Overview: Chemical mapping of a 177-nucleotide RNA with 2A3 and DMS. The RNA was probed in 150 mM KOAc, 10 mM MgCl2 and 150 mM bicine (pH 8.5) at 24 C. 2A3 is a SHAPE reagent: it acylates the 2'-hydroxyl of flexible nucleotides of all four kinds. For DMS the reverse transcriptase was MarathonRT. For 2A3 the reverse transcriptase was SuperScript II with manganese. Reactivities are given for positions 27 through 126.
RNA sequence: GGGAACGACUCGAGUAGAGUCGAAAAAUGGGAUUGACACGAUCCAUCAACGUCCUAGUGGUCGGAGCAGCCUUCGUAUUCGUCGUGACGAUGCUUUUCAUCUGACGAAGAACGAUCACCGCAGACACAACACAGAUGACUUCGGUCAUCUGUGUUGAAAAGAAACAACAACAACAAC
Reactivity to 2A3 in 0.01 (KOAc 150mM, MgCl2 10mM, bicine 150mM(pH8.5), 24C), signal-to-noise 1, nucleotides 027 to 126: a010u070g020g060g010a030u000u040g040a100c090a030c210g060a030u010c000c060a010u060c030a010a180c080g060u030c000c020u000a010g030u020g100g030u020c000g040g060a060g000c010a000g030c010c070u050u020c040g020u040a040u010u020c000g020u030c070g010u110g020a090c090g010a010u060g090c180u250u120u100u130c000a000u000c010u090g000a000c000g000a000a010g020a050a030c020g000a000u030c030a000c070c070g000c010a000g000a030c000a000
Reactivity to DMS in 0.01 (KOAc 150mM, MgCl2 10mM, bicine 150mM(pH8.5), 24C), signal-to-noise 2, nucleotides 027 to 126: a060u010g000g010g000a050u000u000g030a160c130a060c100g010a050u000c010c000a040u000c120a130a110c230g020u000c020c000u030a070g000u010g000g000u000c000g010g000a160g020c020a050g020c040c110u010u000c000g030u010a190u000u000c000g010u000c020g020u010g030a020c100g000a020u010g000c300u000u000u000u000c010a050u000c020u000g040a000c020g020a000a020g000a050a070c000g010a000u010c100a030c060c050g020c100a160g040a160c110a110